[RMDB]
RNA sequence: GGGAACGACUCGAGUAGAGUCGAAAAGCUGGCUGUGCGGUUUGCCGACGACGCUCUGCAGUGCGGCAUAGGCGGCGGUGGGCUUGAGGGUGAGGGUGGCGGUGUCGUCGCCGUGGCCGGCGAAGCCCCAUAGAGUGCCGUUCGCGGCACUCUAUGGAAAAGAAACAACAACAACAAC
Reactivity to DMS in 0.01 (KOAc 150mM, MgCl2 10mM, bicine 150mM(pH8.5), 24C), signal-to-noise 2, nucleotides 027 to 126: g020c010u000g010g010c020u010g050u020g010c040g000g000u000u010u010g040c190c050g000a010c020g040a080c030g010c060u000c120u010g020c130a070g010u000g020c090g010g020c060a080u000a120g010g020c130g000g000c130g000g000u020g010g000g000c140u020u000g010a230g010g000g000u000g010a120g010g000g010u020g000g040c060g000g010u000g020u000c020g020u000c020g030c020c020g000u000g000g010c030c010g000g000c020g000a070a100g000c060c020
Reactivity to 2A3 in 0.01 (KOAc 150mM, MgCl2 10mM, bicine 150mM(pH8.5), 24C), signal-to-noise 2, nucleotides 027 to 126: g010c010u010g000g010c020u030g110u200g180c030g070g060u030u170u230g150c060c010g000a010c000g020a010c010g020c040u070c110u290g050c010a070g040u040g120c060g030g000c070a130u130a150g070g000c060g030g010c050g010g010u150g040g000g000c070u070u150g060a100g010g070g070u230g130a080g020g100g060u100g020g030c020g010g030u040g000u040c000g000u030c000g020c020c000g020u000g010g000c000c000g000g000c000g000a030a000g060c000c000